[RMDB]
RNA sequence: GGGAACGACUCGAGUAGAGUCGAAAAACAACACUUAACGCGAUGACCCUCGGUGCGCGAGCUGGUGAGCUUAUCAUGGUGACUUCAGGGUCAGGCAUGGGUAAGUCCACGUUCGUCCGCCAGCUCCCGCCAUAGGGAGGUUCGCCUCCCUAUGGCGAAAAGAAACAACAACAACAAC
Reactivity to DMS in 0.01 (KOAc 150mM, MgCl2 10mM, bicine 150mM(pH8.5), 24C), signal-to-noise 2, nucleotides 027 to 126: a000c130a070a180c220a010c160u000u070a060a120c110g020c030g000a060u000g000a070c030c020c000u030c140g040g060u000g020c130g040c110g000a000g000c010u030g000g010u010g010a300g030c040u020u000a030u000c000a000u000g000g020u000g000a000c000u000u020c280a140g000g000g000u000c010a000g030g000c050a010u010g000g020g000u000a000a000g010u000c040c110a100c070g000u010u000c090g000u000c150c000g000c000c000a080g000c000u000c000c090
Reactivity to 2A3 in 0.01 (KOAc 150mM, MgCl2 10mM, bicine 150mM(pH8.5), 24C), signal-to-noise 4, nucleotides 027 to 126: a000c110a030a020c040a020c070u160u160a170a020c030g020c050g100a100u100g110a120c030c000c020u040c060g040g010u050g010c070g000c020g020a000g000c020u060g010g010u070g090a070g020c000u020u010a000u010c020a020u030g090g030u010g020a010c000u070u060c190a180g200g000g000u010c000a020g140g070c020a010u050g080g000g010u030a020a030g020u120c060c040a060c060g070u090u070c030g110u030c040c000g010c010c000a000g000c020u000c030c020
This 177-nucleotide RNA was probed chemically with DMS and 2A3. For 2A3 the reverse transcriptase was SuperScript II with manganese. For 2A3, 2,732 sequencing reads were counted. The DMS profile rests on 1,911 reads. The reactions ran in a buffer of 150 mM KOAc, 10 mM MgCl2 and 150 mM bicine (pH 8.5), at 24 C.